[RMDB]
RNA sequence: GGGAACGACUCGAGUAGAGUCGAAAACUGGUGAGCACGAAACGAUUUCUUAUCACGAAGAACUGGAGUCCAUUCAAGAGCACAUAUUCGACCCACUUCUUGAACGCCACUAUUUGCUUCUGGCGAACGUCAAUCCUUGGUUCGCCAAGGAUUGACGAAAAGAAACAACAACAACAAC
Reactivity to DMS in 0.01 (KOAc 150mM, MgCl2 10mM, bicine 150mM(pH8.5), 24C), signal-to-noise 2, nucleotides 027 to 126: c020u000g010g050u000g000a030g020c040a040c110g020a090a120a100c200g010a150u000u000u000c100u000u000a150u010c070a100c230g000a060a060g030a040a050c060u000g000g020a050g010u000c020c030a120u000u000c060a010a060g010a090g020c120a060c050a030u010a130u000u000c100g020a130c050c010c030a050c130u010u000c100u000u000g010a030a120c060g000c000c060a040c070u000a060u020u010u000g010c050u000u000c120u010g000g000c000g000a050a120
Reactivity to 2A3 in 0.01 (KOAc 150mM, MgCl2 10mM, bicine 150mM(pH8.5), 24C), signal-to-noise 2, nucleotides 027 to 126: c030u060g040g010u040g020a080g020c010a010c070g060a120a020a020c070g040a100u070u130u000c010u020u080a080u110c030a010c110g070a050a100g040a070a000c100u040g040g010a020g070u050c070c030a080u060u140c070a070a000g030a050g110c040a010c040a080u130a120u120u070c070g080a080c040c020c020a060c030u120u050c000u040u090g070a110a100c000g040c000c060a030c040u090a080u120u100u080g060c020u090u070c020u070g030g050c020g030a010a010
Record summary:
Structure probing data (DMS and 2A3) for a 177-nucleotide construct. For 2A3, 1,132 sequencing reads were counted. The DMS profile rests on 1,083 reads. It was measured as part of the RMDB library OK2TRN. DMS adducts were read by reverse transcription with MarathonRT. The RNA was probed in 150 mM KOAc, 10 mM MgCl2 and 150 mM bicine (pH 8.5) at 24 C.